[RMDB]
An RNA of 177 nucleotides, treated with 2A3 and DMS and read out base by base. It was measured as part of the RMDB library M2PK90. The RNA was probed in 150 mM KOAc, 10 mM MgCl2 and 150 mM bicine (pH 8.5) at 24 C. Reactivities are given for positions 27 through 126. The DMS profile rests on 2,151 reads. 2A3 adducts were read by reverse transcription with SuperScript II with manganese. For DMS the reverse transcriptase was MarathonRT.

RNA sequence: GGGAACGACUCGAGUAGAGUCGAAAAUGAAAGAGCGUCGCAAACACACAGACUAAGUCUCACACUGACUGACGCUAAACCCCUCUGUCAGUGUGGGAGAUAUCGGUAUUAAUGUGAGCGGAAAAAACUUAGUCCUCAUGUUCGCAUGAGGACUAAGAAAAGAAACAACAACAACAAC
Reactivity to 2A3 in 0.01 (KOAc 150mM, MgCl2 10mM, bicine 150mM(pH8.5), 24C), signal-to-noise 1, nucleotides 027 to 126: u140g040a090a060a020g070a010g000c010g030u010c030g050c090a020a160a040c050a000c000a020c020a040g050a040c020u070a130a060g060u010c000u000c000a000c000a000c000u000g000a010c010u050g040a000c000g000c030u010a150a120a100c020c020c000c000u020c020u020g020u000c010a000g000u000g000u000g000g000g000a020g040a000u130a050u070c020g000g030u040a020u030u150a190a090u050g000u000g010a030g050c080g050g000a070a040a000a000a030a000
Reactivity to DMS in 0.01 (KOAc 150mM, MgCl2 10mM, bicine 150mM(pH8.5), 24C), signal-to-noise 3, nucleotides 027 to 126: u010g000a100a090a100g010a070g010c010g030u000c020g010c130a050a070a110c150a060c050a040c070a100g000a030c070u000a100a110g010u000c000u010c010a020c000a010c010u000g000a010c010u000g000a030c090g000c020u000a040a060a120c130c150c000c050u000c010u000g000u000c000a010g020u000g000u000g000g000g000a010g000a080u000a040u000c030g010g000u000a060u010u010a050a130u000g020u010g010a130g030c110g020g010a010a060a030a070a030a080